[RMDB]
RNA sequence: GGGAACGACUCGAGUAGAGUCGAAAAAGAAAAAGAGUCACGUGGCUGUGUAAGAGCUUAUCUACCAGUCAUUAUUCUUAAGCACCAUCUACUGGAUCACAGCCCAAAAGACAGCCCCCAAAAUAUUCUGCUAACAUACACCCCUGUGAAACCAAGACCAUGAUAUACUAUUCGUAGUAUAUCAUGGAAAAGAAACAACAACAACAAC
Reactivity to 2A3 in 0.01 (KOAc 150mM, MgCl2 10mM, bicine 150mM(pH8.5), 24C), signal-to-noise 2, nucleotides 027 to 156: a000g060a030a060a000a000a000g070a000g010u040c030a050c090g030u130g020g030c000u000g000u010g010u100a130a000g040a030g060c080u130u090a020u110c020u070a100c000c010a010g060u050c050a030u050u120a090u060u090c060u070u030a080a010g010c010a010c070c030a030u090c000u110a090c080u050g010g040a010u050c000a010c020a000g000c010c010c000a070a150a060a010g030a010c010a010g050c000c020c000c040c070a100a020a080a000u050a060u040u020c050u060g020c020u040a070a000c000a040u050a020c000a070c030c010c010c040u020g040u000g110a050a010a000c060c000a000a030g020a000
Reactivity to DMS in 0.01 (KOAc 150mM, MgCl2 10mM, bicine 150mM(pH8.5), 24C), signal-to-noise 1, nucleotides 027 to 156: a220g000a070a070a100a070a070g020a140g000u000c020a140c120g040u000g030g000c010u000g020u020g000u010a060a120g000a170g000c070u010u010a060u020c010u010a110c050c040a130g000u000c110a080u000u010a170u010u000c020u000u010a080a060g000c050a110c000c000a080u000c160u000a080c070u000g000g000a290u020c010a030c040a070g010c030c030c010a130a170a060a150g000a050c010a140g010c010c010c040c010c010a000a070a090a090u000a060u010u000c020u000g000c010u030a020a110c030a110u000a040c050a110c030c040c030c010u000g030u000g000a120a050a060c050c020a040a060g000a190
An RNA of 207 nucleotides, treated with 2A3 and DMS and read out base by base. The data come from the RNA Mapping Database (RMDB), library OK3TST. Values cover nucleotides 27 to 156.